The record gives the reactivity of an RNA of 177 nucleotides to DMS and 2A3. For DMS the reverse transcriptase was MarathonRT. The RNA was probed in 150 mM KOAc, 10 mM MgCl2 and 150 mM bicine (pH 8.5) at 24 C. For DMS, 4,131 sequencing reads were counted. In probing experiments dimethyl sulfate is read out at A N1 and C N3, which are open when not base-paired.

RNA sequence: GGGAACGACUCGAGUAGAGUCGAAAAAGCACGAUCACCGGGAUGUGCUGAAGCUGCGGGUCUUCCUUGAGGAUGUCGAGCAGUUCGAGUCCGCUCAGGCGCGGCAUGUUGAGGUCGAGCAAAAUCAACCUUAUUCCUGGUUCGCCAGGAAUAAGGUAAAAGAAACAACAACAACAAC
Reactivity to DMS in 0.01 (KOAc 150mM, MgCl2 10mM, bicine 150mM(pH8.5), 24C), signal-to-noise 4, nucleotides 027 to 126: a030g010c030a010c050g010a110u010c060a120c110c160g010g020g020a090u000g010u000g010c020u000g000a130a130g020c010u000g000c040g000g010g010u000c020u000u000c020c040u000u010g010a080g010g000a040u000g030u010c020g020a060g010c130a080g010u020u000c070g000a180g010u000c030c030g010c050u000c110a090g030g000c070g010c040g000g000c020a020u020g020u010u000g010a140g010g010u000c040g010a060g010c070a080a040a060a100u000c170a080
Reactivity to 2A3 in 0.01 (KOAc 150mM, MgCl2 10mM, bicine 150mM(pH8.5), 24C), signal-to-noise 2, nucleotides 027 to 126: a020g040c040a010c040g040a110u040c030a020c130c020g070g100g000a010u040g030u000g050c030u020g040a010a020g040c020u070g070c030g010g000g010u050c010u120u020c030c000u030u120g020a040g010g040a000u090g080u250c080g010a030g010c070a040g050u070u030c020g020a000g040u030c060c010g010c010u080c050a040g040g000c100g030c000g040g010c020a010u110g130u060u090g080a030g030g000u050c030g000a020g020c040a000a050a000a150u110c050a020